[RMDB]
An RNA of 207 nucleotides, treated with 2A3 and read out base by base. The data come from the RNA Mapping Database (RMDB), library OK3TST. For 2A3, 777 sequencing reads were counted. For 2A3 the reverse transcriptase was SuperScript II with manganese.
RNA sequence: GGGAACGACUCGAGUAGAGUCGAAAAGCUGAAAGCGAAAGCGGCCAGCGAGAGCCGCAGUAUGAACGAGCUGGUCACGGAGGCGCUCUCGCGAGUCGUGGACGGGCCGGCCGGCCAUCGGACGGUACGCCAGCGGGCUCGUGCUUCCGGCCUGCUGCGUAGUGCUGCAUUUCGAUGCAGCACUACGAAAAGAAACAACAACAACAAC
Reactivity to 2A3 in 0.01 (KOAc 150mM, MgCl2 10mM, bicine 150mM(pH8.5), 24C), signal-to-noise 1, nucleotides 027 to 156: g050c040u000g040a100a020a040g030c010g050a030a070a010g000c010g010g000c000c040a080g070c140g120a060g040a010g020c030c030g030c040a010g060u160a150u200g100a080a040c040g020a060g040c000u040g090g040u100c170a020c120g000g020a020g020g020c040g000c050u020c030u050c010g000c020g020a000g000u010c040g050u040g010g000a030c000g000g000g000c000c000g080g000c000c000g030g000c050c060a220u230c010g040g000a010c020g010g000u040a030c010g010c010c000a240g300c090g020g060g010c070u050c030g010u080g000c000u000u000c000c000g000g000c000c000u030g010c020u030g000